[RMDB]
RNA sequence: GGGAACGACUCGAGUAGAGUCGAAAAGAUCUUAGGCACAUCCAAAUGGCACAUAAGUAAUGAUUUUUAAGGAACAUCAGAUAAAACUCAAUAUGUUAGCCAAUCUACAGAAAAGUUCCUGGAUAGCGUACUUUAGCAGGUUCGCCUGCUAAAGUACAAAAGAAACAACAACAACAAC
Reactivity to 2A3 in 0.01 (KOAc 150mM, MgCl2 10mM, bicine 150mM(pH8.5), 24C), signal-to-noise 2, nucleotides 027 to 126: g040a050u010c020u110u120a030g080g000c020a020c000a090u010c020c000a030a030a190u070g010g070c000a010c000a060u110a150a000g080u110a260a030u070g020a020u010u010u030u050u140a120a100g120g010a090a010c000a030u010c000a000g040a070u100a090a150a000a010c020u020c070a030a060u050a030u120g050u060u050a060g020c000c020a020a010u000c020u020a050c000a020g060a060a110a050a010g000u000u010c040c010u020g010g080a040u140a060g090c070
Reactivity to DMS in 0.01 (KOAc 150mM, MgCl2 10mM, bicine 150mM(pH8.5), 24C), signal-to-noise 2, nucleotides 027 to 126: g030a090u000c040u000u000a040g010g010c090a080c030a080u000c050c050a050a120a130u000g000g020c000a070c010a010u000a020a100g000u030a080a070u020g000a050u000u000u000u000u000a130a180g010g000a050a010c100a090u010c110a090g030a080u000a050a090a070a080c040u000c070a040a050u000a020u020g000u030u000a050g020c040c040a070a080u000c020u000a080c110a230g000a100a040a110a070g000u000u000c000c000u000g000g020a090u020a110g010c180
About this RNA:
An RNA of 177 nucleotides, treated with 2A3 and DMS and read out base by base. DMS adducts were read by reverse transcription with MarathonRT.